[RMDB]
This 207-nucleotide RNA was probed chemically with 2A3.
Source: RMDB library OK3TST, as collected in RNAgym.
For 2A3 the reverse transcriptase was SuperScript II with manganese.
RNA sequence: GGGAACGACUCGAGUAGAGUCGAAAAUACAAAGUGCCAAGUGCAAUGCCUGGCAUAUAGUCAAGACUUGAUAAAUAGCAGUGGUGAUCUUUAUCAAUUUGAACCUCUAUAGCCUCACUGGAACAAUGACUUCCCAAGGUGACUAUUUUGCAGGCGAACCGCUAAAUCACUUCGGUGAUUUAGCGGUAAAAGAAACAACAACAACAAC
Reactivity to 2A3 in 0.01 (KOAc 150mM, MgCl2 10mM, bicine 150mM(pH8.5), 24C), signal-to-noise 1, nucleotides 027 to 156: u240a040c080a020a080a000g030u060g050c000c000a180a000g080u080g020c020a110a180u180g000c000c000u020g100g010c000a060u070a000u000a070g020u000c010a000a040g110a180c020u100u070g030a050u030a040a030a050u050a020g050c000a030g030u040g030g000u060g090a050u070c140u000u050u080a130u130c070a140a060u110u020u080g090a100a050c010c000u020c030u150a190u130a150g050c020c010u060c010a090c030u040g000g080a030a010c010a000a160u180g090a120c010u030u000c010c000c000a010a000g040g000u010g000a000c000u000a060u060u300u030u110g000c010a010g000g020c000g000a050